[RMDB]
RNA sequence: GGGAACGACUCGAGUAGAGUCGAAAAGAAGGUCGAGUGCACGACCAGAGAGUGCGGUGAGGGACCGACAAAGAGUUCGAAUCGGAACGAACCCCCGCAAACGAUCGACUGAAGAUCGAAGUGAGAACACCGCUGGAUUAUUCGUAAUCCAGCGGUGAAAAGAAACAACAACAACAAC
Reactivity to 2A3 in 0.01 (KOAc 150mM, MgCl2 10mM, bicine 150mM(pH8.5), 24C), signal-to-noise 2, nucleotides 027 to 126: g100a300a050g000g000u020c020g030a040g130u230g100c020a040c100g000a050c000c000a000g000a010g000a000g040u140g020c010g000g020u080g010a180g020g030g000a040c020c000g000a000c010a000a260a020g100a000g000u010u130c040g000a130a070u120c040g120g000a000a030c070g010a040a090c000c010c010c000c000g070c000a000a060a000c000g000a000u030c000g080a120c130u140g120a200a050g000a000u010c000g000a000a000g020u230g080a120g050a070a000
Reactivity to DMS in 0.01 (KOAc 150mM, MgCl2 10mM, bicine 150mM(pH8.5), 24C), signal-to-noise 2, nucleotides 027 to 126: g060a200a100g000g010u000c050g030a110g010u010g050c170a110c100g000a020c020c000a120g000a080g070a110g000u000g010c000g020g000u020g000a070g020g000g040a070c140c050g000a120c070a030a090a190g020a170g000u020u000c090g000a170a180u040c100g000g010a070a130c040g000a050a180c000c000c000c000c000g010c100a000a060a170c030g000a000u000c000g000a070c140u090g010a130a160g000a000u000c010g000a060a090g030u000g000a070g000a090a100
Chemical mapping of a 177-nucleotide RNA with 2A3 and DMS. Source: RMDB library OK1LIB, as collected in RNAgym. The DMS profile rests on 1,721 reads. DMS adducts were read by reverse transcription with MarathonRT.